[RMDB]
RNA sequence: GGGAACGACUCGAGUAGAGUCGAAAAGGGGUCGGACGCUUUGAUCAUCCGAGGCUGAUGACCCACACUGAAGCCUCCACGGUGUGGCAAGGCCGAGGAUGGGAGCGUCCGACGGAGGCACCCAAAAGAUUGAGAAGGCUUCGGCCUUCUCAAUCAACCCUCACUAUUCGUUCGCGAAUAGUGAGGGAAAAGAAACAACAACAACAAC
Reactivity to 2A3 in 0.01 (KOAc 150mM, MgCl2 10mM, bicine 150mM(pH8.5), 24C), signal-to-noise 2, nucleotides 027 to 156: g020g030g150g020u000c020g000g000a000c010g040c020u300u300u030g010a010u010c000a000u000c000c010g000a000g000g010c000u000g000a300u010g000a040c000c000c010a000c000a010c000u040g020a060a030g000c000c000u030c000c000a000c000g030g000u000g000u000g010g030c090a200a210g020g000c020c000g010a020g010g010a000u010g000g010g010a000g010c010g000u000c000c000g000a000c000g000g000a000g000g000c030a040c000c000c030a030a160a020a020g000a000u020u000g010a000g000a000a020g020g020c040u100u160c300g060g000c030c000u000u000c000u010c000a000a000u000c000a000a000